[RMDB]
RNA sequence: GGGAACGACUCGAGUAGAGUCGAAAAGAAAGCGUGUGGCUGCGAUGCAGUCGUCGUAUGACCGGCCAAAUGCGACUUGCGCGCGAAAGUCCUUGAUGCUGAUAGGCCGGUUAUAGCAUCGGACGAAGGGCGGGCGCGUCUUCGGAUGCGUUUGCCCAAAAGAAACAACAACAACAAC
Reactivity to 2A3 in 0.01 (KOAc 150mM, MgCl2 10mM, bicine 150mM(pH8.5), 24C), signal-to-noise 9, nucleotides 027 to 126: g090a020a060a000g010c010g000u040g020u030g040g010c010u010g000c090g170a100u300g000c000a000g000u010c010g000u000c000g000u020a090u120g050a030c000c000g000g000c010c000a080a130a090u180g000c000g000a000c010u090u170g010c010g000c000g000c010g050a100a030a010g010u000c010c010u050u230g000a000u010g000c010u020g040a060u050a080g010g000c000c000g000g000u010u040a020u020a000g000c000a000u000c000g000g000a010c020g010a070a090
Reactivity to DMS in 0.01 (KOAc 150mM, MgCl2 10mM, bicine 150mM(pH8.5), 24C), signal-to-noise 9, nucleotides 027 to 126: g010a120a070a110g000c000g010u000g020u010g010g010c000u000g000c010g020a150u050g010c010a010g010u000c010g010u000c020g020u000a070u020g010a060c010c000g000g010c000c010a090a110a080u030g010c010g000a010c000u010u040g010c020g010c000g010c010g010a080a090a120g010u000c000c000u020u040g030a010u000g010c000u010g000a200u010a110g000g000c000c000g010g000u000u000a030u020a020g000c000a010u000c000g000g000a030c030g020a110a120
Source: RMDB library OK1LIB, as collected in RNAgym. This 177-nucleotide RNA was probed chemically with 2A3 and DMS. 2A3 adducts were read by reverse transcription with SuperScript II with manganese. For 2A3, 64,815 sequencing reads were counted. Values cover nucleotides 27 to 126. DMS adducts were read by reverse transcription with MarathonRT. The reactions ran in a buffer of 150 mM KOAc, 10 mM MgCl2 and 150 mM bicine (pH 8.5), at 24 C.